Chemical mapping of a 207-nucleotide RNA with DMS and 2A3.
[RMDB]
RNA sequence: GGGAACGACUCGAGUAGAGUCGAAAAGAUCUGCGCCGAUCCGAAACGCUAGCAAACAGCCCGCAUCAUGUCGUCUCCUAACUUCGACGUGGUGAAAUACUGAGCUCAUGCGAGUAAGCCUGUUAGCAAUAGAUCAGAACGUUCGCGUUCUGAUCAAACGUAUAUAACCGUUCGCGGUUAUAUACGUAAAAGAAACAACAACAACAAC
Reactivity to DMS in 0.01 (KOAc 150mM, MgCl2 10mM, bicine 150mM(pH8.5), 24C), signal-to-noise 4, nucleotides 027 to 156: g000a100u000c030u010g020c060g030c050c050g020a080u010c030c030g010a090a050a080c060g000c020u000a020g040c030a070a080a150c120a140g000c000c000c040g000c030a040u000c000a030u000g030u000c010g010u000c120u010c100c060u020a100a080c090u000u000c000g010a050c020g040u010g020g010u000g000a090a080a120u000a080c050u020g020a080g010c020u000c040a180u010g000c040g000a090g020u000a080a180g010c050c060u000g010u000u000a090g020c060a060a130u000a100g000a020u000c000a010g010a020a010c010g030u010u000c290g030c010g020u010u000c000u000g000a000u000c000a000a040
Reactivity to 2A3 in 0.01 (KOAc 150mM, MgCl2 10mM, bicine 150mM(pH8.5), 24C), signal-to-noise 9, nucleotides 027 to 156: g010a040u020c030u100g030c040g030c050c040g030a060u040c030c030g060a040a060a020c060g000c030u030a010g020c040a050a050a080c030a050g030c000c010c010g020c000a000u010c000a000u020g010u010c000g020u000c040u090c080c060u140a170a180c070u070u040c020g010a010c010g010u010g000g010u010g020a040a010a010u160a030c050u060g030a010g020c010u020c060a060u200g050c060g050a020g050u060a050a020g020c010c030u040g020u070u080a020g010c030a100a130u050a200g010a000u000c000a000g000a000a000c010g010u070u070c170g010c010g100u000u000c020u000g010a000u000c000a000a000

The 2A3 profile rests on 11,054 reads.
The reactions ran in a buffer of 150 mM KOAc, 10 mM MgCl2 and 150 mM bicine (pH 8.5), at 24 C.
Source: RMDB library M2RFPK, as collected in RNAgym.
For DMS, 9,410 sequencing reads were counted.
For 2A3 the reverse transcriptase was SuperScript II with manganese.